Annotation:
This 177-nucleotide RNA was probed chemically with DMS and 2A3. For 2A3 the reverse transcriptase was SuperScript II with manganese. Conditions: 150 mM KOAc, 10 mM MgCl2 and 150 mM bicine (pH 8.5), 24 C. Source: RMDB libraries RFM100 and RFMREP, as collected in RNAgym. DMS adducts were read by reverse transcription with MarathonRT.
RNA sequence: GGGAACGACUCGAGUAGAGUCGAAAAGAUCUUGCGCGAUAAAUGCUGACGUGAAAACGUUGCGUAUUGCUACAACACUUGGUUAGCUAUUUAGCUUUACUAAUCAAGACGCCGUCGUGCAGCCCACUUACCGUGACGUAUUCGUACGUCACGGUAAAAAAGAAACAACAACAACAAC
Reactivity to DMS in 0.01 (KOAc 150mM, MgCl2 10mM, bicine 150mM(pH8.5), 24C), signal-to-noise 3, nucleotides 027 to 126: g000a130u080c060u010u000g000c050g000c000g010a040u000a110a050a070u000g020c000u030g020a000c000g020u010g000a100a040a130a020c010g040u010u000g010c010g050u010a060u020u010g000c040u040a160c150a160a130c220a140c010u030u030g000g010u000u000a010g010c250u010a080u000u000u010a110g000c300u000u010u020a100c010u000a000a020u000c000a030a010g000a100c120g000c070c300g000u000c000g000u000g010c010a040g000c020c020c010a140c190
Reactivity to 2A3 in 0.01 (KOAc 150mM, MgCl2 10mM, bicine 150mM(pH8.5), 24C), signal-to-noise 3, nucleotides 027 to 126: g040a090u070c040u080u070g000c000g010c000g000a010u040a080a170a020u110g000c030u060g050a010c010g010u030g060a060a030a030a000c010g010u000u020g010c030g000u050a070u010u160g080c030u100a070c050a210a020c020a010c050u000u000g000g000u020u000a010g000c070u020a110u120u170u150a060g020c020u020u050u070a010c010u020a000a010u010c010a030a000g110a240c090g040c050c050g010u010c000g000u000g000c000a020g000c000c000c020a000c010